Background
The record gives the reactivity of an RNA of 177 nucleotides to 2A3 and DMS. Source: RMDB library TTRDEL, as collected in RNAgym.
[RMDB]
RNA sequence: GGGAACGACUCGAGUAGAGUCGAAAAGAUAUGGAUGUGAGACGCUUUUGACGUGCAGUCGGAAACGACGCACGAUAAGCGUCCACAUCCUAAGUCAAAUCAGUACGACGUUCGCGUCGUACUGAAACGUAAUAUUAGUGUUCGCACUAAUAUUACGAAAAGAAACAACAACAACAAC
Reactivity to 2A3 in 0.01 (KOAc 150mM, MgCl2 10mM, bicine 150mM(pH8.5), 24C), signal-to-noise 9, nucleotides 027 to 126: g010a010u040a020u100g000g000a000u010g080u020g040a300g010a090c010g010c020u100u190u240u300g130a050c010g000u010g010c060a070g020u000c000g010g000a030a030a000c010g000a000c000g000c000a000c010g000a010u050a090a030g000c000g000u000c000c000a000c000a000u000c000c000u000a010a000g010u000c020a000a040a190u040c000a000g010u000a000c000g000a000c000g020u050u110c300g000c010g130u010c000g000u000a000c000u000g000a010a010a000
Reactivity to DMS in 0.01 (KOAc 150mM, MgCl2 10mM, bicine 150mM(pH8.5), 24C), signal-to-noise 9, nucleotides 027 to 126: g010a020u000a240u010g000g000a010u000g010u000g000a140g010a010c000g020c000u000u000u010u010g010a190c060g000u000g000c000a100g030u000c000g010g000a050a050a100c000g010a010c000g010c000a000c000g000a050u000a020a030g020c000g010u000c000c000a000c000a000u000c000c000u000a000a050g010u000c020a090a120a150u000c000a000g000u000a000c000g010a010c000g020u000u010c220g020c010g020u000c000g010u000a000c010u000g000a010a040a120
DMS adducts were read by reverse transcription with MarathonRT.